Chemical mapping of a 207-nucleotide RNA with 2A3 and DMS. For DMS, 2,939 sequencing reads were counted. For DMS the reverse transcriptase was MarathonRT.

RNA sequence: GGGAACGACUCGAGUAGAGUCGAAAAAAUGGCACUGCAGAGCUGAUGGGCCAUGUACCUAUCCAAAAUGAGGUCCCAUCUUGCACACUGUGCUAAUUUGAGAUUCUCAUGCCUCCUACUUGGAGAGACCGCAUGCCCAGCUUCGGCUGGGCAUGAAUAUUGAAUACUCGUUCGCGAGUAUUCAAUAAAAAGAAACAACAACAACAAC
Reactivity to 2A3 in 0.01 (KOAc 150mM, MgCl2 10mM, bicine 150mM(pH8.5), 24C), signal-to-noise 2, nucleotides 027 to 156: a000a000u020g000g000c010a010c000u060g020c140a020g030a040g080c010u020g000a000u000g000g010g010c000c010a060u130g060u040a060c030c020u050a100u200c170c030a100a090a080a180u160g040a070g070g000u170c000c020c000a000u010c030u060u120g020c030a020c000a010c060u030g010u010g000c030u090a080a260u010u020u020g040a070g010a040u070u000c000u010c020a060u140g010c000c000u000c000c000u070a270c100u140u160g010g000a040g000a000g030a090c080c000g010c000a000u000g000c000c000c000a000g000c000u000u040c150g110g000c000u000g000g010g000c010a000u000g000a000a000
Reactivity to DMS in 0.01 (KOAc 150mM, MgCl2 10mM, bicine 150mM(pH8.5), 24C), signal-to-noise 2, nucleotides 027 to 156: a060a030u010g000g030c020a070c010u000g020c040a240g040a200g050c010u000g010a070u010g010g000g040c110c010a160u010g010u010a060c030c010u000a070u000c120c090a110a080a120a100u000g000a020g020g000u000c000c000c010a010u000c020u030u000g030c010a080c040a160c090u000g000u000g010c000u000a020a040u000u010u000g000a190g030a130u000u000c020u000c010a090u000g000c000c000u010c020c000u000a140c120u000u000g050g000a040g000a100g040a090c040c030g020c010a030u000g000c010c010c000a000g040c010u000u000c300g030g030c030u000g000g000g030c000a000u000g000a030a110

For 2A3, 843 sequencing reads were counted.